This 177-nucleotide RNA was probed chemically with DMS and 2A3. For DMS the reverse transcriptase was MarathonRT. Reactivities are given for positions 27 through 126. The RNA was probed in 150 mM KOAc, 10 mM MgCl2 and 150 mM bicine (pH 8.5) at 24 C. The 2A3 profile rests on 2,148 reads.
RNA sequence: GGGAACGACUCGAGUAGAGUCGAAAAGCGUCUGCGAUUUGUAUCGUGAUGUUCGAUGCCAAAGCGAAAGAGCUGCACCACAAGGUCAAGAUCAGCAAUAUCCAUCUCAUUAUUGGUUAUUCCGCAAUAUUAAAUUAUCCUUCGGGAUAAUUUAAUAAAAAGAAACAACAACAACAAC
Reactivity to DMS in 0.01 (KOAc 150mM, MgCl2 10mM, bicine 150mM(pH8.5), 24C), signal-to-noise 5, nucleotides 027 to 126: g020c020g020u000c020u000g020c020g000a030u000u000u010g010u000a050u000c010g020u010g020a090u010g020u010u010c050g010a070u010g010c080c070a040a070a090g000c030g000a060a070a050g000a180g010c030u000g020c080a130c030c030a050c130a050a100g000g000u000c040a060a100g000a060u000c040a050g000c050a060a050u000a060u000c030c020a050u000c110u000c070a100u010u000a110u000u000g010g000u000u000a110u000u000c040c040g030c140a060a120
Reactivity to 2A3 in 0.01 (KOAc 150mM, MgCl2 10mM, bicine 150mM(pH8.5), 24C), signal-to-noise 3, nucleotides 027 to 126: g020c020g050u000c030u070g000c000g050a050u010u070u230g070u120a030u050c020g010u030g090a130u130g130u140u070c030g010a020u050g030c040c040a060a010a020g040c050g050a110a070a000g030a020g030c020u000g020c040a040c010c000a030c020a040a020g070g000u030c020a020a060g010a160u050c020a000g030c030a020a050u020a050u100c010c000a060u040c040u000c070a100u040u210a070u110u090g060g040u030u020a100u110u030c040c020g040c010a060a040